[RMDB]
RNA sequence: GGGAACGACUCGAGUAGAGUCGAAAACUCAAACAAAUGCCAAGUGAAAGAGGAUAGAAUUAAAAUUACAAAUAAAGAUCCGUACGAAGUUUUUAGAGUAGGGUAGUCAAACUUUCAAAAGGACGUAGGUAUUCUAGUUGUUCGCAACUAGAAUACCAAAAGAAACAACAACAACAAC
Reactivity to DMS in 0.01 (KOAc 150mM, MgCl2 10mM, bicine 150mM(pH8.5), 24C), signal-to-noise 1, nucleotides 027 to 126: c010u000c000a130a040a090c230a070a040a070u030g000c020c020a050a170g000u010g030a020a060a070g000a100g000g000a050u010a030g000a080a080u010u000a000a070a030a050u020u060a160c030a060a060a100u030a040a090a150g000a100u010c000c060g010u000a060c050g000a100a050g010u000u000u000u070u030a080g000a200g030u010a050g000g010g000u010a040g000u030c050a040a090a090c030u020u000u060c030a010a020a090a090g000g020a060c110g010u000a070
Reactivity to 2A3 in 0.01 (KOAc 150mM, MgCl2 10mM, bicine 150mM(pH8.5), 24C), signal-to-noise 3, nucleotides 027 to 126: c010u000c000a080a120a010c040a050a140a050u220g010c010c000a090a050g030u040g070a090a030a010g060a070g010g010a000u090a060g120a080a020u120u150a140a090a020a110u110u080a090c100a070a090a030u240a100a160a010g050a040u010c030c010g040u000a000c010g040a040a000g000u000u050u120u150u300a140g030a070g020u090a090g040g070g100u030a030g080u050c000a000a090a000c000u130u000u000c020a080a090a020a000g020g000a010c010g040u030a040

Source: RMDB library RFM100, as collected in RNAgym. The record gives the reactivity of an RNA of 177 nucleotides to DMS and 2A3. For DMS the reverse transcriptase was MarathonRT. For 2A3, 1,261 sequencing reads were counted. 2A3 adducts were read by reverse transcription with SuperScript II with manganese. The reactions ran in a buffer of 150 mM KOAc, 10 mM MgCl2 and 150 mM bicine (pH 8.5), at 24 C.